An RNA of 207 nucleotides, treated with DMS and 2A3 and read out base by base. DMS adducts were read by reverse transcription with MarathonRT. The DMS profile rests on 3,125 reads.
[RMDB]
RNA sequence: GGGAACGACUCGAGUAGAGUCGAAAACCUACUCAAUACGUCCUCGUCGUACAGAACGGUAACAUGUUUUCCGAACAUCCGCGCUUGGGUAUACGAGUAUACACCUAACCCAACCCUCGCCAACGGGAGUGCAUCCACGAGUUCGCUCGUGGAUGAAACACCUAUAGGUCUUCGGACCUAUAGGUGUAAAAGAAACAACAACAACAAC
Reactivity to DMS in 0.01 (KOAc 150mM, MgCl2 10mM, bicine 150mM(pH8.5), 24C), signal-to-noise 2, nucleotides 027 to 156: c040c010u010a030c040u010c020a030a160u000a040c000g010u010c000c000u000c030g020u010c030g020u030a090c070a070g020a070a100c040g000g000u000a060a120c090a090u010g030u000u010u040u000c050c020g030a110a100c010a110u000c020c040g030c050g030c030u000u000g010g000g010u000a030u010a070c060g030a120g010u000a240u020a110c050a020c100c020u010a030a070c020c020c010a050a060c030c010c010u000c050g030c000c050a130a070c070g000g030g010a100g010u000g000c000a020u000c000c000a000c020g030a030g040u000u010c300g090c010u000c000g010u010g000g000a000u010g010a050a150
Reactivity to 2A3 in 0.01 (KOAc 150mM, MgCl2 10mM, bicine 150mM(pH8.5), 24C), signal-to-noise 4, nucleotides 027 to 156: c010c000u010a060c020u050c050a090a120u080a130c020g070u020c000c030u050c020g100u060c010g020u050a060c020a100g060a140a030c020g030g010u050a050a030c040a130u130g050u050u040u030u060c040c040g010a040a030c010a100u050c020c020g040c000g000c040u010u080g030g030g020u060a060u020a110c060g020a010g050u030a010u070a050c100a070c020c040u120a110a100c000c010c040a020a030c020c010c000u050c030g050c030c020a070a030c030g000g020g020a080g040u070g030c000a000u000c000c000a000c000g010a000g020u100u080c180g060c090u000c000g000u000g000g000a000u000g000a000a000